An RNA of 177 nucleotides, treated with DMS and 2A3 and read out base by base. For DMS the reverse transcriptase was MarathonRT. Reactivities are given for positions 27 through 126.

[RMDB]
RNA sequence: GGGAACGACUCGAGUAGAGUCGAAAAUCACAUAUGCCACUGUGGAGGAGGUGGAUGCAGCUAUGAAUGCAAGGCCACACAAGGUGGAUGGAAGAGUUGUGGAACCAAAGAGAGCUGUCUCCAGAGAACAACGUCUAUAGUUCGCUAUAGACGUUGUAAAAGAAACAACAACAACAAC
Reactivity to DMS in 0.01 (KOAc 150mM, MgCl2 10mM, bicine 150mM(pH8.5), 24C), signal-to-noise 6, nucleotides 027 to 126: u010c060a100c090a090u010a080u000g010c040c030a030c030u010g020u010g000g000a080g010g010a110g010g030u000g010g000a050u000g020c040a040g010c080u010a140u010g000a130a080u010g010c070a060a100g000g000c020c020a080c040a080c110a100a100g020g020u000g000g000a050u010g020g020a120a070g000a090g010u000u000g010u000g000g000a080a100c060c040a050a080a110g010a090g000a060g000c060u000g000u000c050u000c020c040a120g000a170g010a130
Reactivity to 2A3 in 0.01 (KOAc 150mM, MgCl2 10mM, bicine 150mM(pH8.5), 24C), signal-to-noise 4, nucleotides 027 to 126: u090c000a000c030a050u180a020u230g030c020c010a030c030u040g000u060g080g100a100g010g050a080g020g040u020g020g010a020u020g000c010a010g000c020u150a090u300g120a190a020u050g090c070a040a060g090g000c020c000a030c000a010c020a070a060g100g020u050g050g060a070u090g020g090a080a080g030a020g070u100u090g020u050g030g010a030a040c010c000a040a050a010g100a010g010a000g040c050u030g030u020c010u010c010c010a040g010a000g020a160